Source: RMDB library OK2TST, as collected in RNAgym.
An RNA of 177 nucleotides, treated with DMS and read out base by base.
[RMDB]
RNA sequence: GGGAACGACUCGAGUAGAGUCGAAAAGCCUGAGGAUUGCCCCUUCCCCAGCUCCAGCGCCAUCUCGGUGGUGAAGAUUCUGCGAGUACUCCGAGUACUGCGGCCCCUCCGAGCCAUCAACAGGGCCUACCAGGGAAUAGUUCGCUAUUCCCUGGUAAAAAGAAACAACAACAACAAC
Reactivity to DMS in 0.01 (KOAc 150mM, MgCl2 10mM, bicine 150mM(pH8.5), 24C), signal-to-noise 2, nucleotides 027 to 126: g000c050c020u000g030a060g000g000a110u010u000g010c020c020c040c090u000u000c010c000c010c060a160g020c050u000c030c030a070g010c050g020c040c020a050u000c060u010c130g010g010u010g000g010u000g020a080a070g010a130u020u010c020u000g010c040g020a030g050u000a030c010u010c160c150g020a160g030u000a020c030u000g020c020g000g000c070c030c020c030u010c010c040g000a090g000c070c020a030u000c070a060a130c130a070g000g020g000c050c140

The DMS profile rests on 1,902 reads. Reactivities are given for positions 27 through 126.